[RMDB]
RNA sequence: GGGAACGACUCGAGUAGAGUCGAAAAGGUAAAGCAGUAAACGUUGAUAGGGUUAUAGAGCGAGUAAUCGGCUGGAGAACGUAGCAUGCCGCAGGCCCCGCAGCAAUAUUUGUAUGAGUGGUCGGAGCCACUCCCGAGGUUUCGACCUCGGGAGUGGAAAAGAAACAACAACAACAAC
Reactivity to DMS in 0.01 (KOAc 150mM, MgCl2 10mM, bicine 150mM(pH8.5), 24C), signal-to-noise 1, nucleotides 027 to 126: g000g010u000a050a040a100g020c030a080g020u000a030a070a090c110g000u000u000g000a180u000a120g030g020g000u000u010a080u010a100g000a110g000c040g000a060g020u010a120a060u000c070g020g040c010u000g040g000a100g000a110a040c140g020u000a060g000c060a060u000g010c060c040g020c070a170g020g000c010c000c020c100g000c050a060g000c020a030a050u020a130u010u020u010g020u000a060u000g000a120g020u000g020g000u010c060g050g020a110g010